The record gives the reactivity of an RNA of 177 nucleotides to DMS. The data come from the RNA Mapping Database (RMDB), library OK2TRN. The RNA was probed in 150 mM KOAc, 10 mM MgCl2 and 150 mM bicine (pH 8.5) at 24 C. Values cover nucleotides 27 to 126. For DMS, 648 sequencing reads were counted.
RNA sequence: GGGAACGACUCGAGUAGAGUCGAAAACUUGGUAGUGUUGAAGGGCCUGGCGAGAGCCUAAUACUAUGGACUCCGCUCCCCCAGAGUUGGGAUACAGAACAAGACUAUAGUUGUCAUCAUUAUGUGAGAUCCAAGUGGCAUUCGUGCCACUUGGAUCAAAAGAAACAACAACAACAAC
Reactivity to DMS in 0.01 (KOAc 150mM, MgCl2 10mM, bicine 150mM(pH8.5), 24C), signal-to-noise 1, nucleotides 027 to 126: c070u000u050g010g030u010a030g010u000g010u010u020g030a110a140g010g020g010c200c040u000g030g010c010g060a150g000a080g000c000c000u000a050a180u000a160c200u020a080u000g000g000a090c030u000c040c020g020c070u000c060c060c000c030c030a120g010a080g010u000u010g000g010g010a120u000a050c100a140g000a100a070c090a080a050g000a070c050u000a050u000a090g010u010u000g010u030c040a100u000c100a040u000u060a010u000g010u010g040a220